This 207-nucleotide RNA was probed chemically with 2A3.
The reactions ran in a buffer of 150 mM KOAc, 10 mM MgCl2 and 150 mM bicine (pH 8.5), at 24 C.
The 2A3 profile rests on 1,844 reads.
RNA sequence: GGGAACGACUCGAGUAGAGUCGAAAAUACCGCAGGCCUGCGGUGCGGCAGUGUGGAGACCUGCCGUAAGCCGUGUUGUUUUGACAACCGGGAGAAAGCGUAUGCGGAGGCAGUGCUUUCAGGGUCUAAAAGUAUGGGAUCUUCGGAUCCCAUACAACCCAUAACUACCGUUCGCGGUAGUUAUGGGAAAAGAAACAACAACAACAAC
Reactivity to 2A3 in 0.01 (KOAc 150mM, MgCl2 10mM, bicine 150mM(pH8.5), 24C), signal-to-noise 2, nucleotides 027 to 156: u080a000c000c000g000c000a000g010g020c000c020u010g000c000g000g000u010g000c010g020g000c000a020g010u060g010u140g280g090a050g020a070c000c000u000g000c000c000g010u000a000a000g020c000c010g110u150g020u160u000g000u030u110u080u300g130a020c010a010a010c010c000g000g010g010a000g010a000a000a010g000c010g030u060a200u110g010c040g010g060a050g210g030c010a020g020u000g050c010u000u000u000c010a010g020g000g000u010c000u010a040a080a010a040g010u000a000u000g000g000g010a000u000c000u050u040c120g080g000a000u010c000c000c000a000u000a000c000a000a000